Chemical mapping of a 177-nucleotide RNA with DMS. For DMS, 967 sequencing reads were counted. Reactivities are given for positions 27 through 126.
[RMDB]
RNA sequence: GGGAACGACUCGAGUAGAGUCGAAAAGAUAUGGAGGGCUUUCUAAUCAAUCGUUAAGCGAGCUCGUUUCGGAAACGAAACAGAGCGAUGAGCUUACUGCGAUUGAUUAGAAAGCCCUCCUAAGUCAGUAACGAAACUUGUUCGCAAGUUUCGUUACAAAAGAAACAACAACAACAAC
Reactivity to DMS in 0.01 (KOAc 150mM, MgCl2 10mM, bicine 150mM(pH8.5), 24C), signal-to-noise 1, nucleotides 027 to 126: g030a050u010a300u000g010g020a010g020g000g010c000u000u000u020c000u010a020a010u000c010a000a010u000c000g060u000u000a020a050g010c020g010a210g010c010u000c010g010u000u010u010c010g000g000a170a120a300c010g000a010a010a010c010a140g020a050g000c020g000a110u000g010a230g010c000u000u010a020c300u000g050c010g000a010u000u000g000a030u000u000a000g000a000a020a000g010c010c010c000u000c000c010u000a000a070g000u020c080a140